[RMDB]
RNA sequence: GGGAACGACUCGAGUAGAGUCGAAAAAAUUUAGAUUAUCCAGGUGUAGCGGUGAAAUUCGUAGAGAUCUGGUGGAUAAUGAACCGGUGGCGAAGGCGAAAGAUAACCGCUGAAAAGCUGAAGUGAACUUUAACGCUACGUUCGCGUAGCGUUAAAGAAAAGAAACAACAACAACAAC
Reactivity to DMS in 0.01 (KOAc 150mM, MgCl2 10mM, bicine 150mM(pH8.5), 24C), signal-to-noise 1, nucleotides 027 to 126: a080a040u030u000u020a080g000a120u000u000a090u020c000c030a100g040g010u000g010u010a040g070c000g020g010u000g010a050a070a080u000u000c010g020u000a160g010a100g010a140u000c010u020g010g010u010g000g000a120u000a070a020u000g020a040a050c060c000g000g010u000g010g040c300g010a070a140g000g020c020g000a020a010a050g000a090u000a130a030c000c010g040c010u040g000a070a030a030a070g040c010u000g040a010a130g020u000g000a070a160